[RMDB]
Structure probing data (2A3 and DMS) for a 177-nucleotide construct. Reactivities are given for positions 27 through 126. The 2A3 profile rests on 4,334 reads. The data come from the RNA Mapping Database (RMDB), library M2PK50. Values are in units of 0.01, from 0 to 300, in steps of 10.
RNA sequence: GGGAACGACUCGAGUAGAGUCGAAAAGCAGUACGGUUCGCCGUACUGCAAAGGCACAUGCAAAACCGGUGGGAUACCAUAAACGGAAAGCCAAGCAUGAAAAAACAGGGACCUUCGGGUCCCUGAACCUAGUUUAGAUCUUCGGAUCUAAACUAGGAAAAGAAACAACAACAACAAC
Reactivity to 2A3 in 0.01 (KOAc 150mM, MgCl2 10mM, bicine 150mM(pH8.5), 24C), signal-to-noise 3, nucleotides 027 to 126: g010c000a000g000u000a000c010g020g050u020u120c200g020c120c000g020u000a010c000u010g000c000a010a000a020g020g000c060a030c010a100u010g000c000a000a010a040a170c010c000g000g000u030g010g040g010a120u180a260c010c020a020u090a040a220a030c060g010g030a100a020a020g030c000c030a020a010g010c010a010u040g030a100a070a020a000a020a000c000a010g020g000g000a000c000c020u050u120c250g090g000g000u000c000c010c000u000g000a000a000
Reactivity to DMS in 0.01 (KOAc 150mM, MgCl2 10mM, bicine 150mM(pH8.5), 24C), signal-to-noise 3, nucleotides 027 to 126: g010c000a010g020u000a010c000g000g000u000u000c260g090c000c000g010u020a000c000u000g000c000a000a020a060g020g000c100a090c020a010u000g000c020a040a010a170a140c010c030g010g010u010g000g000g000a150u020a150c030c010a060u010a060a090a200c120g000g000a040a080a080g000c010c030a060a220g000c030a010u010g000a040a060a050a100a100a160c010a020g010g000g000a010c000c000u010u030c190g030g010g000u000c000c000c000u000g010a010a060